[RMDB]
RNA sequence: GGGAACGACUCGAGUAGAGUCGAAAAGACACACUUAGCAGAUGACCUCCUCGUUGGUGCGUGUCGGUAAUGUUGUCAGUCACAGGCAACAGUUAACGAUCUGCUUAAAUAAAAAGAGAAGAACAAACAUCAUUAUGCGGUUCGCCGCAUAAUGAUGAAAAGAAACAACAACAACAAC
Reactivity to DMS in 0.01 (KOAc 150mM, MgCl2 10mM, bicine 150mM(pH8.5), 24C), signal-to-noise 3, nucleotides 027 to 126: g030a060c030a010c000a050c000u050u030a070g000c030a030g010a010u000g000a030c000c030u000c040c030u020c080g000u020u030g000g010u050g020c050g020u010g000u000c000g040g030u000a090a240u000g000u030u010g010u000c000a050g000u080c230a070c300a080g020g000c000a000a000c020a030g000u000u000a010a020c000g010a020u020c000u010g000c000u020u000a030a050a170u040a030a130a030a060a060g020a090g000a010a030g010a050a060c090a110a050a100
Reactivity to 2A3 in 0.01 (KOAc 150mM, MgCl2 10mM, bicine 150mM(pH8.5), 24C), signal-to-noise 5, nucleotides 027 to 126: g000a000c010a000c010a000c070u090u110a000g000c010a010g000a040u020g000a020c000c000u070c020c010u090c080g090u120u130g040g030u040g000c020g000u010g010u010c030g000g020u120a150a090u020g000u000u010g010u000c000a030g150u130c070a090c060a130g010g000c000a000a000c010a030g000u000u070a010a000c020g000a010u000c000u000g000c020u010u030a020a090a030u100a020a060a010a020a000g150a020g020a180a010g030a060a000c020a120a070a000
Notes: Conditions: 150 mM KOAc, 10 mM MgCl2 and 150 mM bicine (pH 8.5), 24 C. Structure probing data (DMS and 2A3) for a 177-nucleotide construct. It was measured as part of the RMDB library OK1LIB. For 2A3, 4,887 sequencing reads were counted. For 2A3 the reverse transcriptase was SuperScript II with manganese.